[RMDB]
RNA sequence: GGGAACGACUCGAGUAGAGUCGAAAACAUGGAGUGCUCGGGCCUCGGAGCCUCCUACAACAACAACAACUUUCGAGGCCCUUAAUGGGCGAAAGCCCUAGGAGUCGUGGCGGCGUGCACGCUCCGUAUGACUUAAUGUAUUACACGCCGGAUACAAAAUAAUGAGGUAUUUCGAUACCUCAUUAUUAAAAGAAACAACAACAACAAC
Reactivity to DMS in 0.01 (KOAc 150mM, MgCl2 10mM, bicine 150mM(pH8.5), 24C), signal-to-noise 2, nucleotides 027 to 156: c050a130u010g030g010a050g010u010g010c070u000c040g030g020g030c000c000u010c000g000g030a030g040c020c020u000c040c040u010a090c070a090a130c080a140a160c080a090a110c060a110a060c070u010u000u000c000g000a050g040g010c000c000c070u000u000a050a030u020g010g010g040c000g010a100a070a260g010c010c020c000u000a050g020g000a090g020u000c020g050u000g010g030c010g000g050c030g060u000g000c010a050c050g020c020u000c010c020g010u000a050u010g020a080c070u000u010a090a080u010g020u000a140u000u010a060c030a030c010g020c000c010g010g000a080u020a070c060a080a100
Reactivity to 2A3 in 0.01 (KOAc 150mM, MgCl2 10mM, bicine 150mM(pH8.5), 24C), signal-to-noise 3, nucleotides 027 to 156: c040a060u110g000g000a010g000u190g040c000u000c010g010g010g000c000c000u030c000g020g000a020g000c020c000u010c030c010u060a040c080a210a000c000a030a000c010a020a000c010a030a040c020u130u220u080c040g000a000g010g000c000c000c000u020u070a030a000u030g000g000g010c020g050a040a010a010g000c000c010c000u010a050g000g010a020g040u250c010g000u030g000g030c020g000g030c000g010u000g000c000a010c000g020c000u040c000c000g050u060a150u130g050a030c030u040u130a030a020u160g100u140a080u070u220a030c010a000c020g010c000c020g040g000a010u010a030c070a010a230
Structure probing data (DMS and 2A3) for a 207-nucleotide construct.
Reactivities are given for positions 27 through 156.
2A3 adducts were read by reverse transcription with SuperScript II with manganese.
For 2A3, 2,004 sequencing reads were counted.